Structure probing data (2A3 and DMS) for a 177-nucleotide construct. DMS adducts were read by reverse transcription with MarathonRT. Conditions: 150 mM KOAc, 10 mM MgCl2 and 150 mM bicine (pH 8.5), 24 C.
RNA sequence: GGGAACGACUCGAGUAGAGUCGAAAAUGAACUCUUUCUGUUAGGUCAAUAAGGAAACUAAACAAAAAAUGUUGAACAUUUGACACAAUAAUAGGCCUUAAAUCAGUGAUCUGAGGAAGUAAACAUCACAUUACUCUCUUUUCGAAGAGAGUAAUGUAAAAGAAACAACAACAACAAC
Reactivity to 2A3 in 0.01 (KOAc 150mM, MgCl2 10mM, bicine 150mM(pH8.5), 24C), signal-to-noise 6, nucleotides 027 to 126: u050g010a030a030c030u000c000u050u040u000c030u020g120u160u070a010g010g000u000c020a020a080u050a040a010g010g020a050a060a140c020u050a060a080a050c090a070a130a020a030a020a030u060g020u080u150g110a150a020c040a120u050u050u050g040a050c030a000c030a120a030u120a140a040u020a060g070g140c010c010u050u020a090a110a090u170c070a060g100u020g090a010u000c010u010g020a010g020g010a020a000g020u110a050a100a040c040a040u120c040
Reactivity to DMS in 0.01 (KOAc 150mM, MgCl2 10mM, bicine 150mM(pH8.5), 24C), signal-to-noise 7, nucleotides 027 to 126: u000g010a140a160c150u010c020u000u000u000c010u000g000u000u000a020g020g010u000c010a070a120u010a030a020g010g010a060a050a080c030u000a040a090a090c120a010a060a110a050a050a040u000g010u010u010g000a090a300c080a050u000u000u000g000a110c160a080c180a060a070u000a070a070u000a040g000g000c010c010u010u000a020a080a100u010c220a120g000u000g000a020u000c010u000g000a040g000g000a000a030g000u000a070a080a100c110a050u000c160